[RMDB]
The record gives the reactivity of an RNA of 177 nucleotides to 2A3 and DMS. Values are in units of 0.01, from 0 to 300, in steps of 10. The reactions ran in a buffer of 150 mM KOAc, 10 mM MgCl2 and 150 mM bicine (pH 8.5), at 24 C. 2A3 adducts were read by reverse transcription with SuperScript II with manganese. For 2A3, 2,774 sequencing reads were counted.

RNA sequence: GGGAACGACUCGAGUAGAGUCGAAAAUUCGGAGCCGGUCCAACACGCCGCGAACCGCGUGCUCGGUGACCGACAGCGGUGACAUCACCGUUUCGCCGAGGCUCACGAUGUAGUCGAUCCGAUCGACGGUGCGUAGCUAUUUCGAUAGCUACGCACCAAAAGAAACAACAACAACAAC
Reactivity to 2A3 in 0.01 (KOAc 150mM, MgCl2 10mM, bicine 150mM(pH8.5), 24C), signal-to-noise 2, nucleotides 027 to 126: u090u010c020g010g000a000g010c040c000g010g040u040c030c000a000a020c020a040c020g020c030c000g140c060g080a100a070c100c020g010c020g020u050g000c060u050c120g100g050u130g040a060c010c020g020a020c040a000g020c000g000g000u020g060a110c050a180u300c000a050c000c010g040u010u050u060c030g000c000c020g010a020g010g000c010u000c020a030c030g020a010u080g100u210a020g000u000c010g010a040u060c020c030g020a110u070c050g040a040c110
Reactivity to DMS in 0.01 (KOAc 150mM, MgCl2 10mM, bicine 150mM(pH8.5), 24C), signal-to-noise 2, nucleotides 027 to 126: u000u000c010g010g000a200g000c020c000g000g030u030c050c000a150a070c060a060c030g000c000c090g040c100g010a090a170c260c150g010c010g010u010g010c030u010c090g060g020u000g000a040c090c020g020a020c080a030g000c000g000g020u000g000a220c300a220u010c000a010c000c000g010u010u000u000c090g000c040c000g010a110g000g010c020u000c000a120c000g020a090u010g000u000a060g000u000c020g000a060u000c060c030g020a300u000c110g000a130c190